Chemical mapping of a 207-nucleotide RNA with 2A3 and DMS. The data come from the RNA Mapping Database (RMDB), library RNAMAK. For DMS the reverse transcriptase was MarathonRT.
RNA sequence: GGGAACGACUCGAGUAGAGUCGAAAAUCGAUUUCUUCGGAAAUCGAAAAAAGCGUACUACCUCGGCAGCCUCUUGAGAGUUCUCCCAAAUAGGAGAACUCAAUGAUGGAGGAACUACUGCGAGGUAUCGCAAAAAAGGAUAUGUUCGCAUAUCCAAUGGUCUUAUACAGUUCGCUGUAUAAGACCAAAAAGAAACAACAACAACAAC
Reactivity to 2A3 in 0.01 (KOAc 150mM, MgCl2 10mM, bicine 150mM(pH8.5), 24C), signal-to-noise 2, nucleotides 027 to 156: u030c000g000a000u000u010u000c030u000u050c120g040g010a000a000a000u000c000g000a030a000a020a000a000a000g030c030g010u100a060c030u020a000c030c000u020c050g260g040c010a000g000c020c000u030c010u040u030g030a020g000a000g040u000u000c010u050c000c010c050a100a230a080u260a100g000g000a000g000a010a000c000u000c040a000a050u080g010a030u100g000g000a000g010g040a000a000c090u300a030c010u030g010c000g000a000g000g000u010a000u000c020g000c000a000a020a100a100a000a070g020g000a010u040a000u000g040u060u160c250g000c100a010u010a000u020c010c010a000a070
Reactivity to DMS in 0.01 (KOAc 150mM, MgCl2 10mM, bicine 150mM(pH8.5), 24C), signal-to-noise 2, nucleotides 027 to 156: u010c000g050a000u000u000u000c000u000u020c290g040g010a020a010a020u010c010g000a000a030a090a140a120a050g000c010g050u000a060c050u000a030c000c000u000c030g050g040c000a050g000c000c000u010c010u000u000g010a140g000a020g010u010u000c000u000c000c000c030a060a130a210u010a060g000g000a020g030a010a010c010u000c000a000a020u020g010a240u000g000g000a020g010g000a040a090c020u000a200c030u000g010c010g040a010g020g000u010a000u000c040g060c050a000a010a100a080a140a100g010g000a030u010a010u000g010u000u010c270g030c020a020u000a020u020c000c000a040a230